[RMDB]
RNA sequence: GGGAACGACUCGAGUAGAGUCGAAAACGCUCGGCCUGGUACGAUCGCGCUAUGGCCCAGUACCGCGGUACUAGCUAGUACAUGAUCUGAUGAGUACUCGAGCACAGUACGAUCGCGCAGCGCACUGUAGUAUCUCCAUCUUCGGAUGGAGAUACUAAAAAGAAACAACAACAACAAC
Reactivity to DMS in 0.01 (KOAc 150mM, MgCl2 10mM, bicine 150mM(pH8.5), 24C), signal-to-noise 3, nucleotides 027 to 126: c200g000c050u000c110g010g000c040c020u000g010g000u010a080c030g000a040u000c040g000c060g020c030u000a080u000g000g000c010c020c020a040g000u000a030c040c020g030c090g020g000u000a010c020u010a150g020c110u000a140g030u000a020c010a100u010g000a100u010c150u000g020a110u020g010a160g000u010a010c000u000c160g010a030g010c040a070c100a080g020u000a030c010g000a010u000c040g020c160g020c030a030g010c100g000c040a070c110u000g020
Reactivity to 2A3 in 0.01 (KOAc 150mM, MgCl2 10mM, bicine 150mM(pH8.5), 24C), signal-to-noise 4, nucleotides 027 to 126: c060g020c030u030c020g050g000c010c010u070g000g050u140a020c020g020a050u030c010g020c000g000c030u060a140u280g090g040c000c000c010a000g010u000a020c000c010g020c050g020g010u010a020c010u010a050g230c120u160a000g000u030a000c060a100u150g100a160u160c070u170g090a170u090g060a300g050u010a010c000u040c120g040a030g000c020a010c000a040g020u050a020c030g000a030u040c010g000c000g000c040a030g000c030g020c070a040c110u090g060
The record gives the reactivity of an RNA of 177 nucleotides to DMS and 2A3. For 2A3 the reverse transcriptase was SuperScript II with manganese. 2A3 is a SHAPE reagent: it acylates the 2'-hydroxyl of flexible nucleotides of all four kinds. Conditions: 150 mM KOAc, 10 mM MgCl2 and 150 mM bicine (pH 8.5), 24 C. The DMS profile rests on 3,784 reads.